[RMDB]
RNA sequence: GGGAACGACUCGAGUAGAGUCGAAAACAAGUUGGCUUCGGCCAACUUGAAAAGAAUGGUAGACUGAGACCGCUAAACUCAGAUAUCCAAAAAUAGCGGAAAAAAGAUCAGUGUUCGCACUGAUCAAGACUGUAAGACACUUCGGUGUCUUACAGUCAAAAGAAACAACAACAACAAC
Reactivity to DMS in 0.01 (KOAc 150mM, MgCl2 10mM, bicine 150mM(pH8.5), 24C), signal-to-noise 1, nucleotides 027 to 126: c010a010a000g000u000u000g030g030c000u000u010c280g090g020c000c000a000a000c000u010u020g000a060a070a100a170g000a050a160u030g010g060u000a100g040a210c000u020g000a000g010a120c010c010g000c010u000a000a100a040c000u010c000a000g000a170u010a070u000c040c000a010a040a040a000a080u010a010g000c000g000g000a000a030a100a070a120a060g000a000u000c000a000g040u000g000u000u030c180g010c000a000c010u010g010a000u000c000a030a050
Reactivity to 2A3 in 0.01 (KOAc 150mM, MgCl2 10mM, bicine 150mM(pH8.5), 24C), signal-to-noise 2, nucleotides 027 to 126: c000a000a010g000u000u000g020g020c020u030u110c240g080g000c010c000a000a000c000u000u000g000a000a000a000a020g140a040a050u190g100g100u140a030g020a100c010u000g000a020g020a040c010c000g000c020u050a040a130a090c010u010c020a010g040a070u110a060u040c010c040a030a000a010a030a010u010a010g000c010g010g000a040a010a000a040a040a000g000a000u000c000a000g000u000g050u050u050c120g060c080a000c000u000g000a000u000c000a000a010